[RMDB]
RNA sequence: GGGAACGACUCGAGUAGAGUCGAAAACGUUAUUGUAAAGUUUUUCUGUGAAACUAUGCCCGAUAUGCUAUAUAAUGCACCUGAAAUGUUUACGGGAUUCCCCGCACCCGCAUAGGCCAUUAAGAAAGUCCAAUACGUGAUUCGUCACGUAUUGGACAAAAGAAACAACAACAACAAC
Reactivity to DMS in 0.01 (KOAc 150mM, MgCl2 10mM, bicine 150mM(pH8.5), 24C), signal-to-noise 1, nucleotides 027 to 126: c020g040u010u020a040u000u000g020u000a050a120a090g000u000u000u010u000u010c060u030g000u000g000a080a030a030c070u010a100u010g030c000c000c010g030a090u010a050u000g020c010u000a090u000a150u010a100a050u000g010c080a080c030c030u010g000a070a100a080u010g000u010u000u010a080c000g020g000g000a150u000u000c050c020c020c080g020c090a110c050c030c100g050c100a120u020a110g010g020c140c020a030u010u000a070a090g000a120a070a060